Structure probing data (DMS) for a 177-nucleotide construct. High DMS reactivity at an A or C suggests that its Watson-Crick edge is free. Values cover nucleotides 27 to 126.

[RMDB]
RNA sequence: GGGAACGACUCGAGUAGAGUCGAAAAGCGCACAAGUUCGCUUGUGCGCAAAGGGAAACGAGGCAGGGGCAGGGGCCAUGAGCCAUCCCAAGCCCUGGGAAAAAAGGCGAGCCUUCGGGCUCGCCAAGAUAGAGAUAUGCUUCGGCAUAUCUCUAUCAAAAGAAACAACAACAACAAC
Reactivity to DMS in 0.01 (KOAc 150mM, MgCl2 10mM, bicine 150mM(pH8.5), 24C), signal-to-noise 2, nucleotides 027 to 126: g020c010g020c000a020c000a050a000g000u000u020c250g030c000u000u010g020u000g000c000g000c030a000a020a110g020g000g010a040a070a090c140g000a120g060g000c100a090g000g000g020g010c110a100g000g000g030g000c090c030a040u000g000a090g000c020c030a060u000c010c010c050a100a120g000c010c030c010u000g000g000g010a000a100a070a100a070a050g000g000c010g010a020g030c000c000u000u010c140g020g010g030c000u000c020g020c020c000a020a000